RNA sequence: GGGAACGACUCGAGUAGAGUCGAAAAGAUAUGGACCCAAACGUGGUAGGCGAUGAAAUAGAUCGGAAACGAUCUAUGGAGCCUCCAUUGGGUCCUAAGUCAAAACUUAAUCCUUCGGGAUUAAGAACAAUAGCUAGUACUUCGGUACUAGCUAUUGAAAAGAAACAACAACAACAAC
Reactivity to DMS in 0.01 (KOAc 150mM, MgCl2 10mM, bicine 150mM(pH8.5), 24C), signal-to-noise 5, nucleotides 027 to 126: g000a060u000a300u010g010g010a010c010c000c010a010a130a140c260g020u010g010g040u020a020g040g020c000g010a110u000g000a170a090a010u000a010g010a020u010c000g010g000a110a100a170c000g010a000u000c000u000a000u000g000g020a060g010c000c010u000c010c030a050u000u000g020g010g010u000c000c000u000a000a070g000u010c040a110a060a110a240c000u000u000a000a000u000c000c000u000u020c240g040g010g000a010u000u000a000a000g010a150a190
Reactivity to 2A3 in 0.01 (KOAc 150mM, MgCl2 10mM, bicine 150mM(pH8.5), 24C), signal-to-noise 3, nucleotides 027 to 126: g020a010u060a030u170g000g000a020c000c000c000a050a100a070c300g140u170g050g090u300a060g000g000c050g240a300u020g020a020a010a010u010a000g010a000u000c010g010g000a040a030a020c000g000a010u000c000u000a000u000g000g000a010g000c010c000u010c000c000a000u020u030g030g000g000u000c000c000u010a100a000g030u010c010a030a030a070a190c000u000u010a010a000u040c000c010u030u080c300g150g000g000a000u010u010a010a000g020a070a010